[RMDB]
RNA sequence: GGGAACGACUCGAGUAGAGUCGAAAAUACAUAUUGGUGGCGUUUCUUACAACUAAACAAGUCGUAAGGGAACCAGACCAUGUAUAUAUACCUGACAUUCUAAUAAGGAUAUUCAAACUGAAGGCCUCUAUUGGCACUAGUUCGCUAGUGCCAAUAGAAAAGAAACAACAACAACAAC
Reactivity to 2A3 in 0.01 (KOAc 150mM, MgCl2 10mM, bicine 150mM(pH8.5), 24C), signal-to-noise 1, nucleotides 027 to 126: u030a000c030a000u180a090u190u100g050g020u000g090g080c170g040u000u040u000c000u000u000a010c000a060a020c060u080a300a210a030c130a190a000g030u000c010g030u030a000a020g080g050g050a010a020c000c000a000g060a030c000c000a000u000g030u000a000u000a000u000a000u020a100c010c020u080g040a110c080a120u060u100c030u120a230a070u150a240a170g030g010a010u000a120u130u150c070a090a260a180c090u090g010a090a030g140g020c000c050u080
Structure probing data (2A3) for a 177-nucleotide construct. For 2A3, 685 sequencing reads were counted. 2A3 adducts were read by reverse transcription with SuperScript II with manganese. Conditions: 150 mM KOAc, 10 mM MgCl2 and 150 mM bicine (pH 8.5), 24 C. It was measured as part of the RMDB library RFMREP.